Record summary: Source: RMDB library PKBLNG, as collected in RNAgym. An RNA of 207 nucleotides, treated with DMS and 2A3 and read out base by base. 2A3 adducts were read by reverse transcription with SuperScript II with manganese. High DMS reactivity at an A or C suggests that its Watson-Crick edge is free. The RNA was probed in 150 mM KOAc, 10 mM MgCl2 and 150 mM bicine (pH 8.5) at 24 C.

[RMDB]
RNA sequence: GGGAACGACUCGAGUAGAGUCGAAAACGGGGGACCACCAGGUUGCCUAAGGAGGGGUGAACCGGCCCAGGUCGGAAACGGAGCAGGUCAAAACUCCCGUGCUGAUCAGUAGUGGGAUCGCGCCUGUGAAUAGCCACUGCACUCCAGCCUGUGCAACGAUGGUUAAUAACUUCGGUUAUUAACCAUCAAAAGAAACAACAACAACAAC
Reactivity to DMS in 0.01 (KOAc 150mM, MgCl2 10mM, bicine 150mM(pH8.5), 24C), signal-to-noise 1, nucleotides 027 to 156: c050g010g010g010g040g000a070c030c020a070c060c010a020g010g030u000u000g000c050c060u000a100a090g000g010a150g030g000g090g000u010g010a040a070c000c010g020g050c040c010c050a050g060g000u010c010g010g000a080a050a150c050g000g010a290g000c040a060g030g000u000c130a100a050a100a120c050u010c010c010c000g040u000g020c030u000g010a070u020c060a030g000u000a040g000u010g020g020g020a060u010c060g010c160g000c020c020u000g040u000g000a060a090u000a050g020c010c000a060c030u010g020c060a050c050u010c030c010a140g010c080c010u040g010u000g010c030a060a160c120
Reactivity to 2A3 in 0.01 (KOAc 150mM, MgCl2 10mM, bicine 150mM(pH8.5), 24C), signal-to-noise 3, nucleotides 027 to 156: c010g000g000g000g000g020a010c010c020a020c030c010a020g040g070u020u030g030c010c030u080a070a010g030g000a030g020g010g010g000u040g020a050a030c040c000g050g000c000c020c000a040g050g040u040c040g010g030a110a100a020c030g030g020a050g000c040a020g070g000u090c020a010a040a060a130c030u030c020c010c000g000u030g000c020u040g030a160u120c070a020g050u110a010g100u100g040g030g000a040u050c020g030c040g010c070c030u060g000u040g050a070a050u110a040g020c030c010a020c040u080g030c030a000c020u000c010c010a040g010c010c020u060g030u060g010c010a030a000c050
The DMS profile rests on 1,941 reads.
For DMS the reverse transcriptase was MarathonRT.